[RMDB]
RNA sequence: GGGAACGACUCGAGUAGAGUCGAAAAAAGAGCUUAUCAAUCAGUCAGCCCUUGUUCAUCCCCGAGCAGAUGUGUGGUGGUAUUGUGGUGGACCUUUACUGGGCACUCUGCCAAAUAACUGGAGUGGUAAGACCUGUAACUUCGGUUACAGGUCUUAAAAAGAAACAACAACAACAAC
Reactivity to DMS in 0.01 (KOAc 150mM, MgCl2 10mM, bicine 150mM(pH8.5), 24C), signal-to-noise 2, nucleotides 027 to 126: a060a000g020a060g010c040u010u000a140u020c080a110a080u010c140a040g020u020c150a100g000c010c030c010u000u010g000u000u010c090a160u020c000c000c010c260g010a140g000c030a000g000a010u020g010u000g020u000g010g020u000g040g000u000a010u000u010g000u010g000g030u020g010g010a110c040c000u000u000u000a050c040u000g010g000g000c020a020c040u000c010u000g030c010c080a050a050a070u010a080a100c120u000g020g010a120g000u000g010g010